[RMDB]
RNA sequence: GGGAACGACUCGAGUAGAGUCGAAAAAACUCUGCCUGUGAAUUGUGGCUGCUUUGGUGCACGUGUGCUCAGCCGGCGUCCCUCUAGAAUCCUUGAGGGCCUUGUUUCAGCCACAUCAGGAGGGAUUCAGGGACCAGGGCACGCGGGUCUGGAGCUAACGAUUUUAAAAUUUCGAUUUUAAAAUCGUAAAAGAAACAACAACAACAAC
Reactivity to 2A3 in 0.01 (KOAc 150mM, MgCl2 10mM, bicine 150mM(pH8.5), 24C), signal-to-noise 1, nucleotides 027 to 156: a010a010c050u080c030u090g020c000c000u050g010u030g150a100a110u170u080g000u040g060g010c050u020g020c000u040u000u050g050g010u260g090c030a000c030g050u050g000u010g050c010u040c020a070g150c160c060g130g020c110g000u030c020c010c010u020c020u050a120g000a000a010u020c000c010u000u090g050a080g020g000g140c000c010u130u120g030u050u090u040c010a000g000c000c010a100c020a140u060c020a010g120g040a120g020g010g030a010u020u010c000a020g000g010g000a020c050c030a020g000g000g030c020a000c010g020c030g010g000g000u000c000u010g020g000a000g000c030u010a000